[RMDB]
RNA sequence: GGGAACGACUCGAGUAGAGUCGAAAAGAUAUGGACAAAUGGAGUAACCUGUCUUCGACGAAGCAUCUAGCUCGGAAACGAGCUAGAUGCAGAGAAGAUUGGUUACGAUGAAAUUUGUCCUAAGUCACUAUUUUGAUUGGUUCGCCAAUCAAAAUAGAAAAGAAACAACAACAACAAC
Reactivity to DMS in 0.01 (KOAc 150mM, MgCl2 10mM, bicine 150mM(pH8.5), 24C), signal-to-noise 3, nucleotides 027 to 126: g010a050u010a300u000g000g000a020c010a000a010a010u000g020g020a110g010u000a000a000c000c000u000g010u000c000u000u000c000g010a240c300g030a140a210g020c000a010u000c000u010a000g010c000u010c000g000g000a100a130a260c010g010a030g020c000u000a000g000a010u000g030c000a010g010a180g000a000a020g000a000u000u000g000g010u000u000a010c000g000a050u000g000a050a120a040u000u000u010g000u010c000c000u000a010a060g010u000c020a290
Reactivity to 2A3 in 0.01 (KOAc 150mM, MgCl2 10mM, bicine 150mM(pH8.5), 24C), signal-to-noise 1, nucleotides 027 to 126: g000a020u070a010u160g010g010a000c010a000a030a000u030g030g000a070g020u020a000a000c000c000u000g040u010c010u000u020c010g300a300c070g070a230a000g000c000a000u000c010u040a000g010c000u000c010g060g010a000a160a050c010g000a030g040c010u000a010g000a010u000g000c000a000g000a000g000a010a020g000a000u000u030g000g010u010u010a000c000g000a000u030g010a000a010a010u000u020u010g000u000c010c020u010a150a060g000u000c000a000

Structure probing data (DMS and 2A3) for a 177-nucleotide construct. For 2A3 the reverse transcriptase was SuperScript II with manganese. The data come from the RNA Mapping Database (RMDB), library TTRINS. For 2A3, 2,564 sequencing reads were counted.